[RMDB]
RNA sequence: GGGAACGACUCGAGUAGAGUCGAAAAGGGCAAUUUGACAUGGGUCCAAUGGAAAUGAUAAAAUGCAAAAAGAUAACAGAUUUCGACCUCGUCGUUGGGCAACUGCCAAAGGAUAUGCAACCAUUCACCCUUUACGACUUUUCGAAGUCGUAAAGGGAAAAGAAACAACAACAACAAC
Reactivity to DMS in 0.01 (KOAc 150mM, MgCl2 10mM, bicine 150mM(pH8.5), 24C), signal-to-noise 2, nucleotides 027 to 126: g000g000g000c050a060a090u000u010u000g000a070c050a030u000g040g000g040u000c000c040a040a040u010g010g000a040a050a040u020g010a140u000a050a010a090a080u040g040c090a020a060a060a080a070g000a130u030a040a030c060a060g050a140u000u020u020c040g000a080c100c050u010c120g000u000c030g000u000u000g000g010g000c020a020a030c020u000g010c030c060a040a030a070g000g020a160u020a060u010g020c110a100a230c060c040a060u010u020c110a200
Reactivity to 2A3 in 0.01 (KOAc 150mM, MgCl2 10mM, bicine 150mM(pH8.5), 24C), signal-to-noise 1, nucleotides 027 to 126: g000g030g000c050a040a050u060u000u090g030a010c010a020u050g010g000g000u020c030c000a000a010u030g030g020a100a050a050u030g030a020u180a120a130a050a020u130g000c050a040a070a040a050a120g110a040u110a070a020c030a030g080a060u060u100u030c050g020a090c000c010u010c010g110u040c030g030u050u040g020g000g000c000a060a010c100u070g000c000c040a030a050a010g050g000a080u080a020u300g030c010a050a040c020c030a010u070u100c030a140